[RMDB]
RNA sequence: GGGAACGACUCGAGUAGAGUCGAAAAGUGCUAAAUGUUCUUUUGAACUAAAUGCCUAACGACUAACCGUGAUGAAUGUAGCGGUGUAGAAUAGAAGCUAAUGCUAUUCGAAACGGCCGGCAUCGAAAGAUGAAGAUAUAGUCUAAUCUGCAUGGCGUGGAUUGAUAUGUUUCGACAUAUCAAUCCAAAAAGAAACAACAACAACAAC
Reactivity to 2A3 in 0.01 (KOAc 150mM, MgCl2 10mM, bicine 150mM(pH8.5), 24C), signal-to-noise 4, nucleotides 027 to 156: g110u090g010c020u070a120a100a060u170g020u020u010c020u070u270u080u220g040a020a010c020u030a120a020a080u080g020c010c010u030a100a010c070g030a010c040u070a070a020c010c000g030u040g030a100u070g030a080a100u120g010u070a010g020c010g010g030u020g030u020a010g010a020a010u010a030g040a110a010g070c160u150a120a000u170g030c010u010a000u020u000c010g010a080a010a030c000g040g010c020c020g040g000c010a020u040c040g050a060a040a040g020a010u070g030a090a030g080a030u090a020u060a110g010u000c000u010a010a120u030c030u070g050c030a070u140g030g010c030g060
Reactivity to DMS in 0.01 (KOAc 150mM, MgCl2 10mM, bicine 150mM(pH8.5), 24C), signal-to-noise 3, nucleotides 027 to 156: g040u000g010c030u000a100a110a160u000g010u000u000c010u000u000u000u000g010a080a200c040u010a040a110a090u010g000c010c020u010a110a140c060g020a070c010u000a080a040c010c010g010u000g030a200u010g010a100a090u000g020u000a300g020c010g000g010u000g040u000a120g000a060a040u000a040g000a100a060g020c120u010a070a170u010g000c000u000a040u000u000c000g010a100a160a060c070g010g010c050c040g010g000c050a030u000c010g010a140a070a180g010a050u000g000a060a060g010a060u010a080u000a080g000u000c060u000a070a060u010c030u000g040c020a110u000g020g010c030g040